The record gives the reactivity of an RNA of 207 nucleotides to DMS and 2A3. DMS adducts were read by reverse transcription with MarathonRT.
RNA sequence: GGGAACGACUCGAGUAGAGUCGAAAAACUAGGACCAUUUUGCAAAAAGCCCUACAAGAGAGGAUAGAACAUAUUCAGCAGGAAUACAGAGACGAACAGGACUUGAACAUGAAGCUCGUGCAAAGGGCCCUUCAAGACUUACAGGAAGAGGCAGAUAGUCCUAAUUAGGUUUCGACCUAAUUAGGACAAAAGAAACAACAACAACAAC
Reactivity to DMS in 0.01 (KOAc 150mM, MgCl2 10mM, bicine 150mM(pH8.5), 24C), signal-to-noise 2, nucleotides 027 to 156: a100c060u020a080g030g010a130c020c000a170u000u000u000u010g000c040a050a060a120a120a050g000c000c010c010u000a110c080a100a080g010a070g010a070g010g020a100u010a050g000a070a200c020a060u010a090u010u000c050a100g010c040a090g000g010a080a120u010a080c070a120g020a140g010a080c050g010a010a090c050a090g020g010a080c080u000u010g000a070a040c070a110u030g000a150a110g010c050u000c050g030u010g010c070a050a050a100g000g030g000c020c020c030u000u000c040a060a130g000a060c080u020u000a060c060a060g000g010a040a060g000a080g030g040c050a030g000a080u020a100
Reactivity to 2A3 in 0.01 (KOAc 150mM, MgCl2 10mM, bicine 150mM(pH8.5), 24C), signal-to-noise 3, nucleotides 027 to 156: a000c030u050a050g030g000a030c000c020a030u040u020u070u170g020c090a040a040a100a110a040g010c000c000c030u070a070c070a100a020g070a010g010a010g050g010a020u070a080g010a050a050c030a100u150a080u140u080c040a050g000c010a040g030g070a060a020u090a100c020a020g070a030g040a050c020g030a080a040c030a060g010g040a030c020u020u080g020a060a040c020a050u050g030a050a010g000c010u030c090g080u120g030c020a020a030a080g030g020g010c000c000c020u050u040c020a060a040g010a090c010u050u080a040c100a010g010g010a020a030g010a060g020g020c000a000g020a040u140a050